[RMDB]
Chemical mapping of a 207-nucleotide RNA with 2A3. The reactions ran in a buffer of 150 mM KOAc, 10 mM MgCl2 and 150 mM bicine (pH 8.5), at 24 C. The 2A3 profile rests on 860 reads. For 2A3 the reverse transcriptase was SuperScript II with manganese.
RNA sequence: GGGAACGACUCGAGUAGAGUCGAAAAUGGCUUCGACGGGGGUCACAAAAUCACUUGGUGCAUGCCGAGGGGGCCGCUUUCCUCGUAAAUCCAGCAGCAAACUUAUAGUUGCCAACGAAGACAACUUCGCUGUAGCCGCUUAAGGCUUAAGCCUCGACUUCGAAACUUAGUUCGCUAAGUUUCGAAGAAAAGAAACAACAACAACAAC
Reactivity to 2A3 in 0.01 (KOAc 150mM, MgCl2 10mM, bicine 150mM(pH8.5), 24C), signal-to-noise 2, nucleotides 027 to 156: u060g000g000c000u050u020c070g130a050c070g020g030g000g020g040u130c040a000c020a030a130a060a110u160c060a040c120u080u070g050g000u100g060c120a100u250g050c010c000g040a050g010g020g000g010g030c000c000g020c050u030u060u050c000c000u010c000g020u030a030a050a060u030c010c010a000g000c000a010g000c000a060a130a070c040u140u120a030u130a140g010u010u010g000c000c000a060a010c080g040a040a030g040a040c020a120a130c050u080u060c030g050c000u030g030u080a010g000c000c000g030c050u130u110a080a010g010g000c000u010u090a040a050g030c000c000u070c070g010a060